Chemical mapping of a 177-nucleotide RNA with 2A3 and DMS. The reactions ran in a buffer of 150 mM KOAc, 10 mM MgCl2 and 150 mM bicine (pH 8.5), at 24 C. The 2A3 profile rests on 1,770 reads. For DMS, 1,087 sequencing reads were counted.
RNA sequence: GGGAACGACUCGAGUAGAGUCGAAAAAGAAAUGAGCGGUAAGUCCGCUGUAGGUGGUUCUAGGUGUUCCCUUCCGUAGGUUGGCCAUAGCCUAGACAUAACGAGCCUGCAGGGCACGCUCAUUUUACAGCUUUUCUAAGUUCGCUUAGAAAAGCUGAAAAGAAACAACAACAACAAC
Reactivity to 2A3 in 0.01 (KOAc 150mM, MgCl2 10mM, bicine 150mM(pH8.5), 24C), signal-to-noise 2, nucleotides 027 to 126: a040g040a010a010a020u000g020a000g000c030g000g010u000a000a000g030u000c020c000g080c100u010g020u010a000g000g010u030g030g030u150u030c000u000a010g000g000u030g040u240u300c000c010c000u000u010c030c030g220u210a060g000g020u000u000g020g050c000c010a070u160a010g010c010c000u000a010g010a020c000a020u180a120a080c050g010a020g030c000c000u010g000c000a000g000g000g000c000a000c000g010c000u010c000a010u000u010u010u000a020
Reactivity to DMS in 0.01 (KOAc 150mM, MgCl2 10mM, bicine 150mM(pH8.5), 24C), signal-to-noise 1, nucleotides 027 to 126: a100g000a030a010a000u000g040a000g010c000g010g030u000a020a020g020u010c000c000g000c020u000g020u000a010g020g010u000g030g010u020u000c050u000a000g020g000u000g020u000u000c300c000c000u010u020c010c040g020u000a060g060g010u000u000g000g000c010c260a050u010a020g000c010c000u000a000g010a000c020a110u030a040a100c220g030a300g020c000c000u000g000c020a000g010g000g030c000a150c020g000c020u000c000a000u000u000u000u000a070